About this RNA:
Structure probing data (2A3 and DMS) for a 207-nucleotide construct. The 2A3 profile rests on 1,525 reads. In probing experiments dimethyl sulfate is read out at A N1 and C N3, which are open when not base-paired.

[RMDB]
RNA sequence: GGGAACGACUCGAGUAGAGUCGAAAAUAGUUACCAGCUUAUACUUUGUCGCUUCAAUCGCUGGGUUCGUCCUUGUAAGGAUUCUCGAUGAGGACAAAGCAGAGUUUAAUUUUCAUAUAGUUUUAUCUGCAUUAAUGCUUGUGAUUAUGAUGUAUUCCUUAGACCAAGGAUUCGUCCUUGGUCUAAGAAAAGAAACAACAACAACAAC
Reactivity to 2A3 in 0.01 (KOAc 150mM, MgCl2 10mM, bicine 150mM(pH8.5), 24C), signal-to-noise 3, nucleotides 027 to 156: u020a010g030u030u010a000c000c020a000g000c030u110u070a060u050a160c040u080u000u010g010u070c070g090c220u130u140c120a100a170u020c060g060c160u070g030g020g000u030u080c040g010u010c010c040u060u120g100u140a100a050g000g010a050u080u030c020u010c010g020a010u020g020a010g000g010a010c020a000a010a000g000c020a010g000a000g030u040u130u190a070a070u030u060u120u140c020a010u140a040u110a290g030u030u030u020u050a020u040c000u010g020c020a030u010u120a070a040u190g020c010u000u020g000u000g000a020u010u030a010u040g080a040u060g020u140a140u070u070c020
Reactivity to DMS in 0.01 (KOAc 150mM, MgCl2 10mM, bicine 150mM(pH8.5), 24C), signal-to-noise 1, nucleotides 027 to 156: u010a070g000u000u000a050c020c020a160g010c000u010u000a090u010a040c020u000u010u000g000u020c010g030c000u010u010c040a140a050u000c090g020c100u000g020g030g020u000u010c040g000u000c000c120u030u000g010u000a090a050g000g010a090u000u000c020u000c000g030a040u000g020a020g020g030a080c000a050a030a100g070c020a090g000a090g010u000u000u010a030a050u020u010u000u000c070a100u010a090u010a040g010u000u000u000u010a040u010c050u010g020c050a210u000u000a050a080u010g020c030u010u000g020u000g000a070u000u020a040u010g000a060u000g020u010a120u010u000c020